Record summary
Chemical mapping of a 177-nucleotide RNA with DMS and 2A3. For DMS, 8,678 sequencing reads were counted.

[RMDB]
RNA sequence: GGGAACGACUCGAGUAGAGUCGAAAAGUCAACUUGAGCAAACUAAUAUGCAUAGUCCUGAUGUUAUAGUAGGUGACUAUGUCAUUAUUAGUGAAAAAUUGUUUGUGCGUAGUAAGGAAGAAGACGGCUCAAUAAUCUUGUUCGCAAGAUUAUUGAGAAAAGAAACAACAACAACAAC
Reactivity to DMS in 0.01 (KOAc 150mM, MgCl2 10mM, bicine 150mM(pH8.5), 24C), signal-to-noise 6, nucleotides 027 to 126: g010u010c030a070a110c040u000u000g010a100g020c040a090a160a060c000u000a010a010u000a010u000g010c000a010u000a010g000u000c000c010u020g010a180u010g010u010u010a100u000a240g010u000a150g000g000u010g010a010c000u000a000u000g000u020c030a010u010u000a000u010u000a010g010u000g000a030a060a050a070a130u000u010g010u000u010u000g010u000g000c070g010u000a080g010u010a050a070g000g000a080a060g000a070a160g000a040c080g010g010
Reactivity to 2A3 in 0.01 (KOAc 150mM, MgCl2 10mM, bicine 150mM(pH8.5), 24C), signal-to-noise 4, nucleotides 027 to 126: g040u030c010a030a030c050u030u100g010a000g030c020a060a010a070c000u000a000a000u010a000u010g000c000a000u000a010g010u000c000c010u030g050a080u100g140u210u160a140u070a200g080u020a020g010g040u130g040a010c010u000a010u010g020u050c010a000u020u110a000u010u000a000g000u020g020a020a010a000a010a010u110u100g070u090u060u070g080u050g020c050g010u030a030g050u030a080a080g040g030a050a040g010a050a010g020a030c030g030g020